[RMDB]
RNA sequence: GGGAACGACUCGAGUAGAGUCGAAAAAAUAUGGAACCUCAUGCCUCGCUGAGCUCGUAAUUAAAUUUCCAAUCAAACUGUGUUCAAAAAUGGAAAUUAAAUUUCUUUGACAUAGUGUGCAAAUUUACUACCAGUAAUCAUUCGUGAUUACUGGUAGAAAAGAAACAACAACAACAAC
Reactivity to DMS in 0.01 (KOAc 150mM, MgCl2 10mM, bicine 150mM(pH8.5), 24C), signal-to-noise 4, nucleotides 027 to 126: a040a080u000a030u000g000g010a110a090c110c010u010c050a070u010g010c030c070u000c120g030c080u000g010a070g020c080u000c040g040u000a050a060u010u000a040a060a110u020u000u000c030c020a100a100u020c110a040a080a020c010u000g010u000g000u020u000c030a020a030a040a100a120u010g010g000a020a020a080u010u020a040a060a300u020u010u000c020u000u000u000g010a020c010a000u000a020g010u000g010u010g010c260a050a080a110u010u000u000a090
Reactivity to 2A3 in 0.01 (KOAc 150mM, MgCl2 10mM, bicine 150mM(pH8.5), 24C), signal-to-noise 2, nucleotides 027 to 126: a000a000u240a060u050g000g060a060a050c000c050u010c010a010u050g010c050c000u060c070g040c020u010g000a010g020c010u000c020g050u050a000a030u030u090a050a100a100u040u040u020c030c000a040a040u070c020a110a050a040c020u020g010u020g080u180u070c010a020a050a020a060a130u110g040g040a100a010a020u110u120a060a080a040u040u080u020c000u040u030u040g020a020c010a010u010a020g020u040g060u040g020c040a080a090a090u080u110u050a090

Structure probing data (DMS and 2A3) for a 177-nucleotide construct. DMS (dimethyl sulfate) methylates the pairing face of unpaired adenines and cytosines. Conditions: 150 mM KOAc, 10 mM MgCl2 and 150 mM bicine (pH 8.5), 24 C. 2A3 adducts were read by reverse transcription with SuperScript II with manganese.